[RMDB]
RNA sequence: GGGAACGACUCGAGUAGAGUCGAAAAUAUAGGGCAUCAAAGGAGAUGCUAGUUUUGCCAUAUGGGGAUGGAGCUUGAUGAGAAGGGCCGUGACUGAAGAAGCAGGUUUGAGAGUCAUCAGACAUCAGGUGUCAGUCGAUGCAGAGCUACUGGGGAGCUUACCAGUCUCUUUCGAGAGACUGGUAAGAAAAGAAACAACAACAACAAC
Reactivity to 2A3 in 0.01 (KOAc 150mM, MgCl2 10mM, bicine 150mM(pH8.5), 24C), signal-to-noise 2, nucleotides 027 to 156: u290a020u070a050g050g010g020c020a020u010c030a030a170a090g180g020a160g020a030u030g010c000u000a010g000u000u060u020u030g030c020c030a050u060a080u160g010g010g000g010a030u030g010g000a030g040c060u100u030g040a080u070g020a060g040a060a050g050g000g000c030c010g050u060g020a040c030u030g010a070a020g020a050a000g030c050a020g010g020u020u060u080g060a060g000a010g060u030c020a020u010c010a030g030a080c010a050u080c050a060g070g000u030g020u040c020a030g020u060c030g010a010u020g020c030a010g020a010g050c020u080a060c030u020g000g010g030g000a040g010
Reactivity to DMS in 0.01 (KOAc 150mM, MgCl2 10mM, bicine 150mM(pH8.5), 24C), signal-to-noise 2, nucleotides 027 to 156: u010a110u000a130g060g030g000c000a040u000c050a030a100a180g000g000a190g040a060u000g010c030u030a070g010u000u000u000u010g000c020c050a170u000a110u020g010g030g030g010a080u000g010g020a060g010c130u010u000g020a090u000g000a140g020a090a090g000g040g040c020c000g000u000g010a120c050u000g000a080a100g020a070a110g040c030a050g010g020u010u010u020g020a110g010a150g010u000c030a100u000c030a120g010a090c030a060u010c090a100g030g000u010g010u000c020a090g040u000c030g000a090u000g000c020a050g020a080g000c030u000a100c040u000g030g010g030g040a070g000
Structure probing data (2A3 and DMS) for a 207-nucleotide construct. 2A3 adducts were read by reverse transcription with SuperScript II with manganese. The RNA was probed in 150 mM KOAc, 10 mM MgCl2 and 150 mM bicine (pH 8.5) at 24 C. Source: RMDB library OK3TST, as collected in RNAgym.